[RMDB]
RNA sequence: GGGAACGACUCGAGUAGAGUCGAAAAAAAAAGAGUGCACUUCGUAAGUGCCCUUAUAUAAAUAACGAGUUUGGUCAACCAAUUUUUUGACAUGUAUCACAAAUUUGAAUAGAUGUAUUACAUCAACGGAAUUUGGAUAAUUCGUUAUCCAAAUUCCAAAAGAAACAACAACAACAAC
Reactivity to 2A3 in 0.01 (KOAc 150mM, MgCl2 10mM, bicine 150mM(pH8.5), 24C), signal-to-noise 1, nucleotides 027 to 126: a070a000a000a000a030g030a000g000u060g000c000a000c000u090u040c110g150u110a040a000g010u000g000c000c000c010u050u020a060u010a010u010a190a160a050u120a130a050c010g020a000g020u090u140u030g070g000u050c000a090a040c060c030a080a100u000u090u010u060u030u120g010a020c000a000u180g040u150a070u070c020a000c020a090a040a090u050u050u100g080a100a030u100a140g000a000u000g010u030a090u150u200a070c000a020u000c020a060a000c020
Reactivity to DMS in 0.01 (KOAc 150mM, MgCl2 10mM, bicine 150mM(pH8.5), 24C), signal-to-noise 1, nucleotides 027 to 126: a020a070a140a120a080g000a050g000u000g000c010a000c010u030u000c300g000u010a210a040g000u010g020c000c040c020u000u000a050u000a080u000a060a050a050u020a050a050c060g000a040g030u000u000u000g000g000u000c080a040a090c210c060a050a010u000u000u000u000u010u010g000a050c150a030u000g000u010a030u000c060a150c000a020a090a070u010u000u010g020a040a070u030a100g000a080u000g010u020a130u000u060a160c050a010u000c010a130a120c300
Structure probing data (2A3 and DMS) for a 177-nucleotide construct. For DMS the reverse transcriptase was MarathonRT. 2A3 adducts were read by reverse transcription with SuperScript II with manganese. 2A3 is a SHAPE reagent: it acylates the 2'-hydroxyl of flexible nucleotides of all four kinds. Source: RMDB library OK2TRN, as collected in RNAgym.